Overview
An RNA of 177 nucleotides, treated with DMS and 2A3 and read out base by base.
RNA sequence: GGGAACGACUCGAGUAGAGUCGAAAAGAUAUGGACUGCCUACGAGAGAUACCGCUGAUCGGAAACGAUCAUGUAUGGAAUGUAGGCUGUCCUAAGUCAAACAUGGUGACGUUCGCGUCACCAUGAACGAACUAGCUUGGUUCGCCAAGCUAGUUCGAAAAGAAACAACAACAACAAC
Reactivity to DMS in 0.01 (KOAc 150mM, MgCl2 10mM, bicine 150mM(pH8.5), 24C), signal-to-noise 2, nucleotides 027 to 126: g010a060u020a280u000g000g000a030c000u000g000c000c000u000a000c010g000a100g020a300g000a110u000a050c000c010g000c030u000g020a010u000c000g000g000a030a100a090c010g010a000u000c000a000u040g000u000a000u000g010g000a250a130u010g010u000a010g000g000c010u010g040u000c000c000u000a010a040g000u000c040a130a090a250c000a000u000g010g000u000g000a020c000g010u000u020c220g010c000g020u000c010a020c020c020a010u000g000a040a070
Reactivity to 2A3 in 0.01 (KOAc 150mM, MgCl2 10mM, bicine 150mM(pH8.5), 24C), signal-to-noise 2, nucleotides 027 to 126: g020a020u030a030u100g000g000a000c000u050g010c030c000u000a000c050g110a040g010a020g010a250u100a100c020c010g050c030u010g000a000u000c020g040g000a070a050a020c010g000a010u000c030a010u200g030u040a090u070g060g100a190a050u110g000u000a010g000g020c000u000g020u000c000c000u020a040a040g060u010c070a090a030a100c000a020u020g000g000u000g010a000c000g000u040u090c300g000c000g100u000c000a010c000c030a000u010g000a020a000